Chemical mapping of a 177-nucleotide RNA with 2A3 and DMS. The RNA was probed in 150 mM KOAc, 10 mM MgCl2 and 150 mM bicine (pH 8.5) at 24 C. 2A3 is a SHAPE reagent: it acylates the 2'-hydroxyl of flexible nucleotides of all four kinds. It was measured as part of the RMDB library M2PK90.
[RMDB]
RNA sequence: GGGAACGACUCGAGUAGAGUCGAAAAGAAAAUAGCGUAAUGGACAUUGAGAAUGUACGCUAAGUGUGUGUUGUAUAAAUAAGGUCCAAUUGAACACACACACAGUUGGACCUAAUGUCCAAAAAAACAAGUUCAUACUCUUCGGAGUAUGAACUUGAAAAGAAACAACAACAACAAC
Reactivity to 2A3 in 0.01 (KOAc 150mM, MgCl2 10mM, bicine 150mM(pH8.5), 24C), signal-to-noise 1, nucleotides 027 to 126: g160a010a060a000a030u150a000g040c030g000u020a050a000u070g010g010a000c000a050u030u090g010a060g040a170a120u190g010u110a000c000g000c000u020a100a120g030u000g020u030g000u030g000u080u060g180u060a140u140a210a090a060u110a060a000g000g000u000c000c000a000a000u020u030g140a110a000c080a000c000a000c000a000c020a000c000a100g140u060u040g030g000a000c000c020u000a020a010u000g000u000c000c020a000a020a000a020a040a020a020
Reactivity to DMS in 0.01 (KOAc 150mM, MgCl2 10mM, bicine 150mM(pH8.5), 24C), signal-to-noise 1, nucleotides 027 to 126: g000a080a080a060a140u000a000g000c000g010u000a100a040u020g000g020a010c000a030u000u000g010a100g020a080a030u000g000u000a010c040g000c000u000a020a090g000u000g000u000g000u000g000u000u000g010u000a090u010a070a040a060u010a040a070g000g010u000c010c010a020a040u000u020g000a070a040c070a000c030a020c030a020c060a060c080a060g030u000u000g010g000a030c000c030u010a070a010u000g000u010c010c030a000a000a030a120a040a050a090